[RMDB]
An RNA of 207 nucleotides, treated with 2A3 and read out base by base. 2A3 adducts were read by reverse transcription with SuperScript II with manganese. For 2A3, 385 sequencing reads were counted.
RNA sequence: GGGAACGACUCGAGUAGAGUCGAAAAUGGCGGGGGCGAAACAGGAUCGACAAGGGUGUAAAGAUCGCUCUUUUACUCGGCGUGAUACCACCGUUAUCGGGUCAACAGAGUAGUUGCAAAUGACAACAAAAGAAUCGCGCGUUCGCGCGCGAUUCAACAGAGUACAACGGUUCGCCGUUGUACUCUGAAAAGAAACAACAACAACAAC
Reactivity to 2A3 in 0.01 (KOAc 150mM, MgCl2 10mM, bicine 150mM(pH8.5), 24C), signal-to-noise 1, nucleotides 027 to 156: u120g010g030c090g000g060g000g000g000c000g000a020a000a000c070a040g000g020a030u120c010g000a110c040a050a030g020g010g010u040g030u210a160a190a000g080a030u080c110g060c010u110c030u040u120u090u210a100c030u030c010g000g000c020g080u020g030a040u080a110c000c020a000c000c010g020u040u000a100u150c070g060g000g000u030c000a010a000c060a080g020a030g020u100a070g000u080u000g070c120a060a060a260u120g020a130c010a010a000c000a030a220a000a100g000a000a000u000c000g030c000g000c000g020u030u030c300g000c000g000c040g000c000g130a030u000u000c000a000a000